[RMDB]
RNA sequence: GGGAACGACUCGAGUAGAGUCGAAAACCUGCGGUCGGACGUGGCUUUAAGCCUCUUUCGGGAGGUUGCUACACGCUCAGUCUAACAAUCGAGUCGACGUGCCCUGGUAACAAAUCGAUCCUGCGGGCAGUCCAGGGCGAGAUGUGAGAAGUCCGUCGAUACAGUGUUCGUUCGCGAACACUGUAUCAAAAGAAACAACAACAACAAC
Reactivity to DMS in 0.01 (KOAc 150mM, MgCl2 10mM, bicine 150mM(pH8.5), 24C), signal-to-noise 1, nucleotides 027 to 156: c020c010u000g010c060g000g020u010c010g010g020a030c020g040u000g010g010c180u000u020u010a110a120g010c050c000u010c000u000u000u000c300g000g030g020a020g000g030u010u000g010c030u010a050c010a040c000g010c010u010c010a120g010u000c050u000a110a050c120a100a110u000c030g010a110g000u010c060g000a120c000g030u000g000c000c000c010u010g000g020u000a090a130c070a050a050a120u000c070g000a080u010c040c060u000g000c070g030g010g040c020a140g000u010c000c010a070g000g020g030c030g010a050g020a070u000g030u020g000a160g020a210a150g010u000c010c000g020u020c150
Reactivity to 2A3 in 0.01 (KOAc 150mM, MgCl2 10mM, bicine 150mM(pH8.5), 24C), signal-to-noise 3, nucleotides 027 to 156: c000c000u010g060c090g040g010u070c020g020g010a050c040g050u040g040g000c020u110u130u200a110a070g020c010c000u020c010u010u040u070c150g090g010g010a010g000g000u040u090g010c000u020a010c030a020c030g030c030u010c010a030g030u000c040u100a160a090c080a110a130u130c050g020a020g050u040c070g030a050c000g050u080g010c000c000c000u000g030g020u070a150a030c070a030a120a040u130c080g050a070u050c050c030u050g040c080g060g000g000c020a000g020u010c000c000a000g000g000g000c010g000a020g000a010u170g030u080g060a040g010a060a000g030u000c000c010g020u050c080